[RMDB]
Structure probing data (2A3 and DMS) for a 177-nucleotide construct. The RNA was probed in 150 mM KOAc, 10 mM MgCl2 and 150 mM bicine (pH 8.5) at 24 C. For DMS the reverse transcriptase was MarathonRT.
RNA sequence: GGGAACGACUCGAGUAGAGUCGAAAAGAUAUGGAUCACGGCAGCGACGAUCAUAGGGAUCGGAAACGAUCCUAUGGGAGCUGAAGUGAUCCUAAGUCAAAAGCUUACCUAGUUCGCUAGGUAAGCACCUACAUCUAAGCUUCGGCUUAGAUGUAGGAAAAGAAACAACAACAACAAC
Reactivity to 2A3 in 0.01 (KOAc 150mM, MgCl2 10mM, bicine 150mM(pH8.5), 24C), signal-to-noise 5, nucleotides 027 to 126: g000a010u020a010u060g000g000a000u000c010a000c020g180g010c030a010g000c010g270a300c040g000a300u020c020a000u010a020g200g020g040a060u060c010g000g000a010a020a000c000g000a010u010c000c000u000a000u000g000g000g010a060g000c000u000g020a020a000g010u010g000a000u000c000c000u000a000a000g000u000c020a050a000a020a230g000c000u000u000a000c000c000u000a010g020u040u120c300g030c210u010a000g000g010u000a000a000g000c000a000
Reactivity to DMS in 0.01 (KOAc 150mM, MgCl2 10mM, bicine 150mM(pH8.5), 24C), signal-to-noise 4, nucleotides 027 to 126: g010a010u000a070u010g000g000a010u000c000a010c010g010g030c010a010g010c000g000a120c300g010a030u000c000a010u000a030g010g020g000a030u000c000g030g010a020a010a040c000g030a020u000c000c010u000a000u000g000g010g000a020g020c000u000g000a020a020g000u000g000a000u000c000c000u000a000a070g000u000c000a110a070a170a140g000c000u000u010a000c000c000u000a000g000u000u030c300g020c010u000a000g010g000u000a000a000g020c000a010